[RMDB]
RNA sequence: GGGAACGACUCGAGUAGAGUCGAAAACGGCCUUUUCGAAGGCCGCUUGUACCUUUGUGGCAUACGAAAGCUCUUGGACCGUGGGCACCCAUUGGGUGCCGUAACAUCGCUAGAGCUAAGUAUGCCACUCUGGUUGAUCAUCACUUUCGAGUGAUAACGAGAUCCAAUAUUUCGAUAUUGGAUCUCGAAAAGAAACAACAACAACAAC
Reactivity to DMS in 0.01 (KOAc 150mM, MgCl2 10mM, bicine 150mM(pH8.5), 24C), signal-to-noise 3, nucleotides 027 to 156: c010g020g000c000c000u000u000u000u030c280g020a040a030g020g030c020c000g010c000u000u010g010u010a120c010c010u000u000u010g020u010g030g020c000a020u000a030c020g020a120a140a120g030c010u000c010u000u000g020g000a040c060c070g000u010g020g000g010c000a000c010c000c030a300u000u000g040g030g030u000g010c010c080g000u000a030a100c080a040u000c010g010c050u000a010g020a020g020c020u000a060a300g020u000a030u000g010c010c020a000c000u000c010u000g020g020u000u000g010a080u000c090a110u000c010a010c010u000u000u010c210g000a080g050u000g000a040u000a070a210
Reactivity to 2A3 in 0.01 (KOAc 150mM, MgCl2 10mM, bicine 150mM(pH8.5), 24C), signal-to-noise 5, nucleotides 027 to 156: c000g000g000c000c000u010u040u050u130c280g140a030a000g000g000c010c000g010c000u060u140g120u140a040c000c000u000u020u020g000u000g010g000c000a000u000a000c010g060a170a250a050g000c000u000c010u000u040g050g030a100c090c130g030u040g020g000g000c010a000c010c020c080a250u160u300g020g000g000u010g000c000c000g000u070a010a020c020a030u060c040g030c300u060a000g000a000g000c000u010a000a000g000u000a000u000g070c000c000a000c000u000c000u000g000g000u010u110g060a110u150c080a010u000c000a010c010u060u150u180c260g110a010g000u050g010a010u070a040a050